Notes
The record gives the reactivity of an RNA of 177 nucleotides to 2A3 and DMS. For DMS the reverse transcriptase was MarathonRT. Conditions: 150 mM KOAc, 10 mM MgCl2 and 150 mM bicine (pH 8.5), 24 C. 2A3 adducts were read by reverse transcription with SuperScript II with manganese.
RNA sequence: GGGAACGACUCGAGUAGAGUCGAAAACAUUUACCACGAGAAGAGAGACUUAUUGAAGAGCUGGCACCUACCGUCUGUAUUUCACUUACGUGGCAAGCAAAAUUACACAUGUCGGUGCGAGACAAUAAAAGUCAGUAGAGUUCGCUCUACUGACUUUAAAAGAAACAACAACAACAAC
Reactivity to 2A3 in 0.01 (KOAc 150mM, MgCl2 10mM, bicine 150mM(pH8.5), 24C), signal-to-noise 1, nucleotides 027 to 126: c000a020u030u140u120a100c080c000a070c050g160a110g020a170a070g040a000g000a000g040a040c010u080u030a110u160u170g120a200a120g020a060g130c010u020g060g000c000a070c020c010u060a030c000c020g050u070c000u000g000u010a120u060u150u020c050a000c040u080u110a060c070g020u000g070g000c070a050a010g030c000a060a030a000a190u160u160a070c120a020c000a050u120g080u060c060g020g010u040g020c000g010a020g010a000c010a040a010u200a200
Reactivity to DMS in 0.01 (KOAc 150mM, MgCl2 10mM, bicine 150mM(pH8.5), 24C), signal-to-noise 2, nucleotides 027 to 126: c080a100u020u000u000a130c070c030a060c100g000a120g010a090a050g000a120g000a120g010a100c060u000u000a090u000u000g010a160a100g020a110g000c080u000g000g010c030a020c030c020u000a080c140c120g000u010c110u000g030u010a040u000u000u010c080a100c030u000u000a050c120g020u000g010g000c140a050a030g000c150a050a040a040a070u020u000a020c050a030c060a080u010g020u010c130g000g020u000g010c050g010a100g000a050c090a020a070u000a070